[RMDB]
RNA sequence: GGGAACGACUCGAGUAGAGUCGAAAAGAAUGUAAGAGCGUAAUCGCGCCUUGACGUGAGUGAGACAAGACAGAACGCUAUCCAAAGUAAGAUAGCAUAGCUCACAAUACGCUGAUCUGUCGUAGAACCAUUUAUGGUGGUUCGCCACCAUAAAUGGAAAAGAAACAACAACAACAAC
Reactivity to 2A3 in 0.01 (KOAc 150mM, MgCl2 10mM, bicine 150mM(pH8.5), 24C), signal-to-noise 6, nucleotides 027 to 126: g080a030a040u300g030u180a060a040g030a020g010c010g020u030a090a060u100c030g000c000g010c020c100u090u140g040a090c020g010u010g000a040g000u020g010a010g020a050c050a140a020g010a000c030a020g050a100a020c060g000c020u000a000u000c020c020a200a040a060g170u140a120a030g110a000u000a000g000c000a000u060a010g010c000u000c010a000c020a000a070u100a020c040g000c030u030g020a090u010c000u010g010u010c030g000u030a040g070a080a070
Reactivity to DMS in 0.01 (KOAc 150mM, MgCl2 10mM, bicine 150mM(pH8.5), 24C), signal-to-noise 5, nucleotides 027 to 126: g000a100a050u020g000u020a060a050g000a070g020c030g000u000a040a300u010c070g000c020g000c010c210u030u000g000a190c040g040u010g000a090g010u000g000a060g000a140c130a060a090g000a010c040a010g020a060a110c110g020c000u000a000u000c000c130a080a090a140g010u040a110a130g010a000u000a000g010c010a250u010a050g000c020u000c020a020c000a100a080u020a020c040g000c000u000g000a060u000c010u000g010u000c020g010u030a120g020a170a130
The record gives the reactivity of an RNA of 177 nucleotides to 2A3 and DMS. 2A3 adducts were read by reverse transcription with SuperScript II with manganese. For DMS, 9,633 sequencing reads were counted.